[RMDB]
RNA sequence: GGGAACGACUCGAGUAGAGUCGAAAAGAUAGUUUCCGUCAACGUCUGCGCACAAAACGAUGGAAACAGACGCAAGAGAUAAGCCACCGAAAGACCACAGAUGAACAAGAACGUAUACAUCUGUACGGGUCCAGUCGUGAUUCGUCACGACUGGACCAAAAGAAACAACAACAACAAC
Reactivity to 2A3 in 0.01 (KOAc 150mM, MgCl2 10mM, bicine 150mM(pH8.5), 24C), signal-to-noise 2, nucleotides 027 to 126: g160a000u270a080g000u000u010u000c000c000g000u000c040a080a060c030g000u000c080u130g110c050g020c100a000c080a030a190a030a090c080g040a070u030g000g110a030a010a000c010a000g030a000c070g010c060a000a020g010a000g030a190u080a180a010g000c000c000a050c030c030g100a290a010a000g020a040c010c010a000c000a000g050a020u070g010a000a050c050a170a180g080a190a020c050g000u050a050u120a030c000a000u060c020u020g000u020a180c010g040
The record gives the reactivity of an RNA of 177 nucleotides to 2A3. For 2A3, 618 sequencing reads were counted. Source: RMDB library OK1LIB, as collected in RNAgym.